[RMDB]
RNA sequence: GGGAACGACUCGAGUAGAGUCGAAAAAGCAGUUACUACGUCGUAUAGAGAAGGUGACUAAGCUGUGCAUUUGUGCAAUGUGCAAAAAUUGUGGUAAUACUAGCACAAUUUUGCACUCUCAGGACGACUCGUAGUCCGAUUUCGAUCGGACUACGAGAAAAGAAACAACAACAACAAC
Reactivity to 2A3 in 0.01 (KOAc 150mM, MgCl2 10mM, bicine 150mM(pH8.5), 24C), signal-to-noise 2, nucleotides 027 to 126: a000g030c050a040g010u040u030a040c100u040a050c050g090u010c000g030u090a090u140a300g090a010g040a200a040g050g000u000g020a010c010u060a090a030g020c030u060g030u040g010c040a080u020u120u260g130u040g000c040a090a060u110g000u000g020c030a000a030a040a080a060u040u020g010u060g060g030u100a120a090u150a300c170u050a070g070c000a010c000a010a000u000u000u030u000g000c000a010c020u040c010u000c010a020g100g000a030c030g010a050
Reactivity to DMS in 0.01 (KOAc 150mM, MgCl2 10mM, bicine 150mM(pH8.5), 24C), signal-to-noise 2, nucleotides 027 to 126: a060g020c050a030g010u000u000a020c030u000a120c160g000u000c050g010u020a100u000a080g010a070g010a070a100g010g010u010g010a030c020u010a090a110g020c040u010g050u010g010c060a120u000u000u000g020u010g000c030a090a080u050g000u000g010c010a000a030a020a010a010u000u000g000u010g010g000u000a040a170u010a090c240u030a020g000c000a000c000a000a010u000u000u000u000g000c000a000c030u000c010u020c020a130g010g010a010c080g020a140